Notes
This 177-nucleotide RNA was probed chemically with 2A3 and DMS.
RNA sequence: GGGAACGACUCGAGUAGAGUCGAAAAGAUAUGGAAUCGUGCAAGGGAGUGUGGUAUCGGAAACGAUACCAACACGAAGAACUUGAACUACACGAUUCCUAAGUCAAAACGCGUGUUCGCACGCGAAGCAUUAAAAUUUGUUCGCAAAUUUUAAUGCAAAAGAAACAACAACAACAAC
Reactivity to 2A3 in 0.01 (KOAc 150mM, MgCl2 10mM, bicine 150mM(pH8.5), 24C), signal-to-noise 2, nucleotides 027 to 126: g000a000u020a010u070g010g000a000a010u000c010g000u030g030c170a220a140g060g100g060a270g040u010g000u000g000g010u000a000u000c000g010g020a020a020a000c000g000a000u010a000c000c000a020a020c010a000c000g060a080a060g080a050a060c100u170u250g050a040a010c020u040a020c050a010c010g000a000u000u000c000c000u000a010a000g020u000c020a040a020a090a200c030g000c010g000u030g040u090u120c300g000c160a000c000g000c010g040a030a020
Reactivity to DMS in 0.01 (KOAc 150mM, MgCl2 10mM, bicine 150mM(pH8.5), 24C), signal-to-noise 5, nucleotides 027 to 126: g000a010u000a110u010g000g000a000a000u000c010g020u010g000c040a040a050g020g020g000a100g030u000g020u000g000g000u000a000u000c000g010g000a030a020a050c000g020a020u000a000c000c000a010a020c010a000c000g000a160a190g010a140a160c260u000u010g020a070a090c040u010a180c020a000c010g010a010u000u000c000c000u000a000a050g000u010c010a090a060a120a200c040g010c010g020u000g010u000u020c250g030c000a010c000g010c010g000a080a150
For 2A3 the reverse transcriptase was SuperScript II with manganese. It was measured as part of the RMDB library TTRDES. In probing experiments dimethyl sulfate is read out at A N1 and C N3, which are open when not base-paired. For DMS, 9,395 sequencing reads were counted. The RNA was probed in 150 mM KOAc, 10 mM MgCl2 and 150 mM bicine (pH 8.5) at 24 C.